[RMDB]
RNA sequence: GGGAACGACUCGAGUAGAGUCGAAAAGGAGUUCGCUGACCGCUUCGCCAUCAAGUACAUUGAGCGUGCGCAGACCCGUGCGAAGGGUGCAUACGAUGUGCCUGCGAACCUGCACAGCGAUGACGCUGCGGACAUCAUCCGCGACUCGCUACGCGCAAUCAAUGAUGAAUUUCGAUUCAUCAUUGAUAAAAGAAACAACAACAACAAC
Reactivity to 2A3 in 0.01 (KOAc 150mM, MgCl2 10mM, bicine 150mM(pH8.5), 24C), signal-to-noise 9, nucleotides 027 to 156: g080g010a050g010u080u050c020g000c030u040g050a120c020c010g010c040u040u040c020g000c030c000a070u030c050a070a090g080u130a120c070a190u090u200g050a050g070c070g030u060g010c030g000c010a010g030a100c000c020c060g050u080g050c060g090a100a060g040g010g000u010g000c000a010u070a130c070g190a140u070g010u020g020c000c020u030g000c020g020a030a050c020c010u030g000c040a050c030a030g010c020g030a030u070g030a040c050g000c130u090g000c010g020g010a030c010a170u170c020a040u000c050c000g000c000g020a020c000u010c010g020c040u040a040c040g020c010g000c040a010
Reactivity to DMS in 0.01 (KOAc 150mM, MgCl2 10mM, bicine 150mM(pH8.5), 24C), signal-to-noise 5, nucleotides 027 to 156: g000g010a100g010u010u000c030g030c030u000g010a110c020c050g000c040u000u010c000g020c020c020a080u000c030a070a240g010u000a070c070a160u000u010g010a090g010c040g030u010g020c010g000c030a110g020a080c010c030c020g040u010g020c040g000a080a110g010g020g040u010g000c020a080u000a080c120g020a110u000g040u010g020c000c020u010g020c010g000a040a030c040c050u000g010c030a070c030a060g010c070g010a060u000g030a110c060g020c000u000g020c010g010g020a180c080a140u000c070a300u000c010c010g010c020g010a070c020u030c010g010c040u000a070c030g000c010g020c050a150
About this RNA
This 207-nucleotide RNA was probed chemically with 2A3 and DMS. DMS adducts were read by reverse transcription with MarathonRT. For 2A3 the reverse transcriptase was SuperScript II with manganese.